[RMDB]
RNA sequence: GGGAACGACUCGAGUAGAGUCGAAAACGAGGCCGAAUCCCUUCUCGAGGUUAUGUUACUGUAAGGCCUGCCUUAAGUAAGUGGUGUUGACGUUUGGGUCCUACGCAACGAGACCCCGUGAACCUUGCACCAUCGUUAGGUUCGCCUAACGAUGGUGAAAAGAAACAACAACAACAAC
Reactivity to DMS in 0.01 (KOAc 150mM, MgCl2 10mM, bicine 150mM(pH8.5), 24C), signal-to-noise 1, nucleotides 027 to 126: c080g000a070g010g000c020c030g020a170a080u000c010c020c010u000u000c010u020c010g000a080g000g000u000u000a040u000g020u010u010a050c070u000g020u010a050a010g010g020c040c050u000g000c010c030u000u010a080a080g020u010a050a030g010u000g030g010u010g010u000u000g000a030c070g010u010u000u010g030g000g000u000c010c030u000a090c120g000c180a060a040c080g020a170g000a050c010c000c020c090g000u020g000a050a120c060c000u000u000g000
The record gives the reactivity of an RNA of 177 nucleotides to DMS. High DMS reactivity at an A or C suggests that its Watson-Crick edge is free. For DMS the reverse transcriptase was MarathonRT. Reactivities are given for positions 27 through 126.